[RMDB]
RNA sequence: GGGAACGACUCGAGUAGAGUCGAAAAUGAAAGAGCGUCGCAAACAGACAGACUAAGUCUCACACUGACUGACGCUAAACCGCUCUGUCAGUGUGGGAGAUAUCGGUAUUAAUGUGAGCGGAAAAAAGACAUGUUCUUCGUUCGCGAAGAACAUGUCAAAAGAAACAACAACAACAAC
Reactivity to 2A3 in 0.01 (KOAc 150mM, MgCl2 10mM, bicine 150mM(pH8.5), 24C), signal-to-noise 1, nucleotides 027 to 126: u220g040a070a020a000g070a010g030c020g020u000c000g000c030a000a050a000c050a020g100a020c010a010g020a010c040u110a180a110g130u000c010u010c000a010c000a010c020u000g010a000c000u010g010a000c050g000c030u000a160a040a010c010c010g000c030u000c020u030g000u000c000a000g000u010g030u000g000g010g000a000g030a000u080a040u030c050g050g040u070a040u160u110a170a090u030g030u010g000a020g010c000g000g150a060a020a000a000a000a020
Reactivity to DMS in 0.01 (KOAc 150mM, MgCl2 10mM, bicine 150mM(pH8.5), 24C), signal-to-noise 2, nucleotides 027 to 126: u010g010a060a090a130g000a080g010c010g030u000c010g030c020a040a110a040c180a100g000a040c150a100g000a030c100u000a100a170g010u000c010u000c000a010c010a010c030u000g000a020c000u000g000a030c060g000c020u010a000a080a140c090c060g000c030u000c000u000g000u010c000a010g000u000g040u000g010g000g000a000g000a050u000a060u010c040g000g010u000a060u000u000a120a170u010g010u000g000a220g030c030g000g000a000a030a050a030a060a070
The record gives the reactivity of an RNA of 177 nucleotides to 2A3 and DMS.
The reactions ran in a buffer of 150 mM KOAc, 10 mM MgCl2 and 150 mM bicine (pH 8.5), at 24 C.
For DMS the reverse transcriptase was MarathonRT.
In probing experiments dimethyl sulfate is read out at A N1 and C N3, which are open when not base-paired.
The 2A3 profile rests on 1,665 reads.
Source: RMDB library M2PK90, as collected in RNAgym.